[RMDB]
RNA sequence: GGGAACGACUCGAGUAGAGUCGAAAACAGAAGCCAAUGAUGGCAUGGCACCUCUUUUGUGGCAUGUGUGAAAUCUGCCCUUCGCUGUAAACAUUCUUAUGCAACAUGACACUCUGCCCUAUGUCCAUUUCAUAUGUGGUGUUCAGUGUGCUGGGAAUAUUAAUUACCUAUUCGUAGGUAAUUAAUAAAAAGAAACAACAACAACAAC
Reactivity to 2A3 in 0.01 (KOAc 150mM, MgCl2 10mM, bicine 150mM(pH8.5), 24C), signal-to-noise 9, nucleotides 027 to 156: c060a020g100a130a010g040c030c030a060a110u200g090a100u090g060g020c030a020u010g040g000c030a050c050c040u080c060u110u120u110u170g040u050g030g000c030a030u040g040u010g020u020g070a050a040a080u030c040u040g020c010c010c000u030u050c030g010c050u060g050u170a060a070a060c030a050u070u050c020u050u100a080u140g020c020a050a030c020a120u090g030a020c010a010c040u080c070u090g080c030c010c010u030a060u060g040u030c060c030a070u050u100u070c030a030u050a020u140g070u070g010g000u020g030u050u040c020a030g030u020g000u020g080c050u040g010g010g030a020a010
Reactivity to DMS in 0.01 (KOAc 150mM, MgCl2 10mM, bicine 150mM(pH8.5), 24C), signal-to-noise 4, nucleotides 027 to 156: c050a090g000a080a110g000c020c020a050a090u000g000a120u000g030g030c030a140u000g010g000c020a060c040c090u000c090u010u000u000u020g040u000g010g030c040a050u000g010u000g010u010g010a080a070a090u000c040u000g000c010c020c030u000u000c060g010c020u020g000u010a070a060a080c050a090u010u010c040u000u010a080u000g020c040a050a060c050a070u000g010a070c020a040c020u010c060u010g000c020c040c050u010a050u000g010u000c030c090a080u010u000u000c040a040u000a060u000g030u000g010g020u000g010u000u000c030a100g010u000g020u010g020c020u000g010g010g010a070a170
Overview
Structure probing data (2A3 and DMS) for a 207-nucleotide construct. For DMS, 18,271 sequencing reads were counted. For 2A3, 8,432 sequencing reads were counted. For 2A3 the reverse transcriptase was SuperScript II with manganese. Source: RMDB library OK3TST, as collected in RNAgym. For DMS the reverse transcriptase was MarathonRT.